Overview:
Chemical mapping of a 177-nucleotide RNA with 2A3 and DMS. The RNA was probed in 150 mM KOAc, 10 mM MgCl2 and 150 mM bicine (pH 8.5) at 24 C. Reactivities are given for positions 27 through 126. 2A3 is a SHAPE reagent: it acylates the 2'-hydroxyl of flexible nucleotides of all four kinds. 2A3 adducts were read by reverse transcription with SuperScript II with manganese.
RNA sequence: GGGAACGACUCGAGUAGAGUCGAAAAGAACCAAUUACAAUGGCUUGCAUUUCAAGGCAGGACGGGAACUUUGUGUAUCCUUGUUGCUGUGUGACACACGACGAUGGUAAAGCGUUCUAUUCAGAACCGUUAAAGCACGGUUCGCCGUGCUUUAACGAAAAGAAACAACAACAACAAC
Reactivity to 2A3 in 0.01 (KOAc 150mM, MgCl2 10mM, bicine 150mM(pH8.5), 24C), signal-to-noise 6, nucleotides 027 to 126: g040a030a040c000c000a010a030u110u040a070c080a090a180u100g110g000c010u010u100g020c040a180u060u100u210c060a070a060g090g000c010a020g000g020a020c030g050g000g000a030a030c020u100u190u140g100u120g030u080a200u110c000c000u050u280g020u050u040g140c040u010g000u020g020u050g080a050c010a020c000a020c200g120a000c040g060a080u060g090g040u090a040a050a040g020c020g030u010u000c050u080a220u050u160c060a040g040a070a050c010
Reactivity to DMS in 0.01 (KOAc 150mM, MgCl2 10mM, bicine 150mM(pH8.5), 24C), signal-to-noise 3, nucleotides 027 to 126: g010a150a160c020c020a140a140u040u070a090c180a070a070u010g030g000c000u000u000g020c170a180u050u000u020c110a090a060g030g000c010a020g000g000a030c050g000g000g000a080a090c030u020u000u020g010u030g010u020a090u000c010c000u000u060g030u020u000g020c040u000g010u000g050u000g000a110c170a060c100a100c090g000a000c060g000a020u010g020g010u020a030a060a090g020c110g010u000u010c000u010a090u010u030c140a070g010a040a040c080